An RNA of 207 nucleotides, treated with 2A3 and read out base by base. For 2A3 the reverse transcriptase was SuperScript II with manganese.
[RMDB]
RNA sequence: GGGAACGACUCGAGUAGAGUCGAAAAGCCACAGAAUUCUCAUAUAUUCAGUGGAGGUAAUUGUCUGCAUUUGUAAAGUGAUACAGACAUGAUCCUUAGAUAUGAGACACUGUAUGAAGAUAACACUUAACAUUAUUAUUACAGUCUGCAUAGCCUCCUGAACAGAGGGGUUCGCCCCUCUGUUCAGAAAAGAAACAACAACAACAAC
Reactivity to 2A3 in 0.01 (KOAc 150mM, MgCl2 10mM, bicine 150mM(pH8.5), 24C), signal-to-noise 1, nucleotides 027 to 156: g100c010c000a010c000a030g110a120a090u200u000c000u030c000a010u030a030u040a030u230u130c040a050g000u020g110g000a000g010g010u030a000a000u050u000g010u020c000u000g010c040a040u020u080u010g210u300a300a120a040g030u010g010a010u040a120c000a010g000a000c000a000u030g000a010u120c000c000u000u050a020g040a060u000a000u050g030a000g070a020c040a000c050u020g040u030a050u070g060a060a090g030a050u080a130a020c050a030c110u230u070a150a010c050a060u040u020a030u080u030a000u000u090a130c000a000g130u020c160u080g000c020a020u040a060g070c030c040u100c000